Description
Source: RMDB library OK2TST, as collected in RNAgym. Structure probing data (DMS) for a 177-nucleotide construct. The reactions ran in a buffer of 150 mM KOAc, 10 mM MgCl2 and 150 mM bicine (pH 8.5), at 24 C.
RNA sequence: GGGAACGACUCGAGUAGAGUCGAAAAGAGAAACAGAAGAUGGGGAUCUGAUUUUUUGUGACUUCCCCAAGGUGUAUAUUAAUCCUGUACUUUCUGAUGUUUCUGAGGAUCUUGUUUUAGGUAGGGAUGGCUUCUGAUAAUUCGUUAUCAGAAGCCAAAAAGAAACAACAACAACAAC
Reactivity to DMS in 0.01 (KOAc 150mM, MgCl2 10mM, bicine 150mM(pH8.5), 24C), signal-to-noise 2, nucleotides 027 to 126: g000a050g040a030a050a030c000a030g000a260a030g010a080u000g020g000g010g000a040u000c050u000g010a010u000u010u010u010u020u020g030u010g000a050c090u000u010c000c000c000c040a100a050g010g010u010g010u000a060u010a060u010u010a170a090u000c070c110u010g020u000a040c100u000u000u010c020u000g000a170u000g000u000u000u000c000u010g000a110g010g000a030u010c070u000u010g010u000u010u010u000a030g000g020u010a080g000g010g000a140